[RMDB]
RNA sequence: GGGAACGACUCGAGUAGAGUCGAAAACAGGGAGAGAAUGAAUGAGUGAAAUCCACUGGAAAUUUCCCACCUACUCAUCCAUUCAUUCAUCAGAUACUGGUUGGGGUCUGCUGUGUGCCAGGCCUUAUGCACAGCAGGGGGAAAGACAGAUGUGACAUACCAAAAUAUGGUUCGCCAUAUUUUGGUAAAAAGAAACAACAACAACAAC
Reactivity to 2A3 in 0.01 (KOAc 150mM, MgCl2 10mM, bicine 150mM(pH8.5), 24C), signal-to-noise 2, nucleotides 027 to 156: c040a000g000g040g000a080g000a010g060a060a020u000g000a000a010u010g020a010g050u040g000a070a060a050u090c070c060a090c110u040g030g050a020a080a090u080u060u050c010c030c000a050c000c010u060a080c000u040c030a080u010c030c000a000u010u040c000a000u000u010c010a070u050c060a100g090a240u140a210c060u080g070g040u090u170g040g000g000g030u030c010u000g000c030u000g000u020g000u030g020c030c020a050g000g030c000c000u100u040a030u110g000c020a010c020a010g000c020a000g000g020g010g000g000a050a020a060g070a040c060a030g080a080u120g010u080g140a000c170a070
Reactivity to DMS in 0.01 (KOAc 150mM, MgCl2 10mM, bicine 150mM(pH8.5), 24C), signal-to-noise 1, nucleotides 027 to 156: c050a080g000g010g000a180g000a100g020a040a010u000g000a030a010u000g000a040g010u020g010a060a110a080u010c040c040a070c080u010g000g010a070a120a210u000u000u000c010c010c010a250c080c050u000a070c030u020c000a030u000c000c000a040u000u000c010a060u000u000c040a120u000c030a120g010a100u020a060c060u010g010g020u030u000g020g000g040g030u010c020u020g010c020u010g050u000g000u010g000c060c070a100g020g040c010c040u000u000a080u000g050c010a040c040a000g030c010a020g000g030g000g010g000a040a060a120g000a140c070a070g000a090u130g020u000g010a070c090a190